[RMDB]
RNA sequence: GGGAACGACUCGAGUAGAGUCGAAAAGUGAAGACGAACCAUCGACUGCCGUGUUCCUUUUCCUCUUGGAGGUUGGAGUCCCCUGGGCGCCCCCACACGGCUAGACGCCUCGGCUGGUUCGCGACGCGCAACCAAUCUUGUUCGCAAGAUUGGUUGCAAAAGAAACAACAACAACAAC
Reactivity to DMS in 0.01 (KOAc 150mM, MgCl2 10mM, bicine 150mM(pH8.5), 24C), signal-to-noise 2, nucleotides 027 to 126: g040u010g010a040a070g000a150c030g010a010a040c000c020a060u000c040g040a100c130u000g020c030c030g060u000g000u010u000c050c000u040u000u000u010c020c010u000c050u020u000g020g000a030g020g030u000u000g000g010a160g020u010c010c000c070c050u010g020g010g010c070g030c070c020c040c030c040a100c030a040c030g000g040c030u010a030g000a110c170g010c170c160u000c030g000g000c200u000g010g000u000u000c010g010c020g000a120c160g010c120
About this RNA
Chemical mapping of a 177-nucleotide RNA with DMS. Values cover nucleotides 27 to 126. The RNA was probed in 150 mM KOAc, 10 mM MgCl2 and 150 mM bicine (pH 8.5) at 24 C.